[RMDB]
RNA sequence: GGGAACGACUCGAGUAGAGUCGAAAAUUAGAAGCAAACAACUAUUACAUGUGAUUUUUACCUUGCAAUGAUUAAUAAUGAAGCUUACCAAAUAGAUAUCAAAAAGAAAGUUCAGGGGGAUUAAGCGCGUUAGCAAGAAGUUCGCUUCUUGCUAACGAAAAGAAACAACAACAACAAC
Reactivity to DMS in 0.01 (KOAc 150mM, MgCl2 10mM, bicine 150mM(pH8.5), 24C), signal-to-noise 2, nucleotides 027 to 126: u010u010a080g030a080a080g000c060a080a100a170c090a040a090c070u010a090u000u000a020c030a040u010g010u000g020a060u000u000u000u000u030a110c060c100u010u030g020c070a030a040u010g000a090u000u000a050a060u020a050a050u000g020a130a150g020c020u010u010a130c100c040a050a070a090u010a040g000a100u000a050u000c040a050a070a050a120a140g000a050a030a160g000u010u000c050a010g010g020g000g020g000a100u000u000a050a070g000c130g010
Reactivity to 2A3 in 0.01 (KOAc 150mM, MgCl2 10mM, bicine 150mM(pH8.5), 24C), signal-to-noise 1, nucleotides 027 to 126: u100u040a090g080a130a030g010c020a000a060a130c020a000a130c050u070a050u220u180a060c040a060u100g000u000g090a080u010u050u110u100u230a120c040c030u000u020g000c020a060a140u040g010a080u110u200a060a050u080a020a020u010g060a070a010g000c000u030u060a060c000c010a030a030a240u100a020g030a050u080a020u150c020a000a130a060a060a030g100a050a030a030g050u100u110c150a140g000g010g000g010g010a000u060u240a090a000g030c080g010
Background:
This 177-nucleotide RNA was probed chemically with DMS and 2A3. The DMS profile rests on 1,214 reads.